An RNA of 177 nucleotides, treated with DMS and 2A3 and read out base by base. 2A3 adducts were read by reverse transcription with SuperScript II with manganese. The RNA was probed in 150 mM KOAc, 10 mM MgCl2 and 150 mM bicine (pH 8.5) at 24 C. The DMS profile rests on 1,068 reads. Source: RMDB library OK1LIB, as collected in RNAgym. DMS adducts were read by reverse transcription with MarathonRT.
RNA sequence: GGGAACGACUCGAGUAGAGUCGAAAAUUAAUCAAAUUUCAAAUUUGAUUCAGAUAGGAAUCCAAAAAGGUGGUAGGUACGUUUUUUUCAGUCACAAAAGCGAAUAAUUGAAACCUAAAAUCCUAAACACAGGUAGUCUGUUCGCAGACUACCUGUGAAAAGAAACAACAACAACAAC
Reactivity to DMS in 0.01 (KOAc 150mM, MgCl2 10mM, bicine 150mM(pH8.5), 24C), signal-to-noise 1, nucleotides 027 to 126: u020u010a010a040u000c000a010a010a010u000u000u090c160a070a020a080u000u000u000g000a000u000u000c300a180g020a130u020a040g000g000a040a050u040c070c090a000a030a130a060a050g000g020u000g000g000u000a110g050g000u010a140c080g010u000u000u000u000u000u000u000c060a060g000u070c080a050c190a000a000a000a150g000c050g000a160a150u000a030a000u010u020g020a130a110a080c000c000u010a000a000a010a000u000c000c000u000a040a100a170
Reactivity to 2A3 in 0.01 (KOAc 150mM, MgCl2 10mM, bicine 150mM(pH8.5), 24C), signal-to-noise 1, nucleotides 027 to 126: u090u060a030a000u010c000a000a010a010u170u190u170c170a160a120a040u000u020u000g000a000u000u020c030a010g070a140u080a020g070g050a040a060u050c010c000a030a040a000a210a000g100g030u020g050g050u030a040g000g070u080a050c030g000u040u000u000u000u000u000u000c070a120g020u130c080a050c020a120a060a030a000g070c050g030a000a030u100a120a050u040u160g120a090a100a010c000c000u010a020a000a000a130u120c010c030u010a030a040a030